[RMDB]
RNA sequence: GGGAACGACUCGAGUAGAGUCGAAAAUCGUGGUCUCGGUGUUCCGUGGGCACGGGGUCUCAUCGCCGAGGAAGACCUAGUUAGGGGGUCUUUCAUUUGGGGGCUCGUCCGGGAUAGAGACCCCCAAGCCGUCUCGGUAGUUCGCUACCGAGACGGCAAAAGAAACAACAACAACAAC
Reactivity to 2A3 in 0.01 (KOAc 150mM, MgCl2 10mM, bicine 150mM(pH8.5), 24C), signal-to-noise 2, nucleotides 027 to 126: u030c030g040u030g120g080u050c030u030c000g040g020u170g070u150u110c020c010g020u150g000g030g060c070a020c050g010g000g010g050u000c020u000c030a060u020c030g050c100c010g010a040g050g000a000a000g010a000c000c010u100a070g080u130u240a060g140g000g000g000g000u000c010u050u030u000c050a100u050u000u060g030g000g010g000g020c040u000c020g060u020c030c080g030g010g000a010u070a010g020a040g060a130c000c000c000c000c000a000a010